[RMDB]
RNA sequence: GGGAACGACUCGAGUAGAGUCGAAAAGCCACGAUCUAAGCCAGACGGCAUGCCACGGCCAGAUCCGAAAAUGCAACACGAGCACGCGGCCGGUAGAUGAACCCAUCCAGCCACAUCGACAGCCGCGAAUAUCGUCAGAUUUCGAUCUGACGAUAUUAAAAGAAACAACAACAACAAC
Reactivity to DMS in 0.01 (KOAc 150mM, MgCl2 10mM, bicine 150mM(pH8.5), 24C), signal-to-noise 9, nucleotides 027 to 126: g010c040c020a110c130g000a050u010c040u000a140a160g000c040c030a100g010a100c120g010g000c030a070u010g010c030c040a100c100g000g010c040c060a060g000a050u000c020c040g010a070a050a090a060u010g000c030a070a070c100a080c110g000a090g000c090a210c000g010c010g000g000c010c000g000g010u000a060g000a010u000g000a130a110c060c020c030a100u010c060c060a060g010c040c070a230c020a010u000c010g000a100c300a110g000c000c010g010c010g010
Reactivity to 2A3 in 0.01 (KOAc 150mM, MgCl2 10mM, bicine 150mM(pH8.5), 24C), signal-to-noise 9, nucleotides 027 to 126: g060c010c010a050c050g030a050u030c020u140a050a040g020c010c010a050g040a130c050g030g010c030a030u100g030c010c010a050c040g010g000c010c020a020g010a050u020c010c040g080a060a050a020a030u140g020c040a070a020c020a040c140g080a050g040c040a010c040g000c000g000g000c010c010g030g030u020a010g000a020u030g030a050a060c010c020c010a040u090c030c000a010g040c020c020a060c010a030u000c010g010a020c010a000g000c000c000g000c000g000
The record gives the reactivity of an RNA of 177 nucleotides to DMS and 2A3.
For DMS the reverse transcriptase was MarathonRT.
The RNA was probed in 150 mM KOAc, 10 mM MgCl2 and 150 mM bicine (pH 8.5) at 24 C.
It was measured as part of the RMDB libraries RFM100 and RFMREP.